Background:
Conditions: 150 mM KOAc, 10 mM MgCl2 and 150 mM bicine (pH 8.5), 24 C. The record gives the reactivity of an RNA of 207 nucleotides to 2A3. For 2A3 the reverse transcriptase was SuperScript II with manganese.
[RMDB]
RNA sequence: GGGAACGACUCGAGUAGAGUCGAAAAACUGCAUCUACGGAUGCAGAACUACGUUCAUCCAAUUUAUUUGGACGCAUGAAAUGAGAAUAGGGAAGGGGAUUCUCAUACGCAGGCUACGGCCUGCGAAAAAACUCCUUAUGCUUCGGCAUAAGGAGAAUCAUUGUCUGACGUUCGCGUCAGACAAUGAAAAAGAAACAACAACAACAAC
Reactivity to 2A3 in 0.01 (KOAc 150mM, MgCl2 10mM, bicine 150mM(pH8.5), 24C), signal-to-noise 1, nucleotides 027 to 156: a000c000u000g000c000a000u030c000u010a010c240g110g010a000u000g000c000a000g020a010a010c030u070a020c030g060u020u070c030a050u010c010c020a070a090u110u090u130a190u160u010u000g020g010a030c020g000c090a040u150g060a080a180a030u060g000a020g000a020a030u060a090g000g060g110a000a100g010g000g020g040a000u040u000c010u000c010a010u060a060c020g010c000a000g030g020c000u020a030c190g130g010c000c010u000g000c000g090a020a000a000a000a000a000c000u000c010c010u000u000a000u000g000c000u020u070c130g030g000c000a000u000a000a000g000g000a000g000a000a000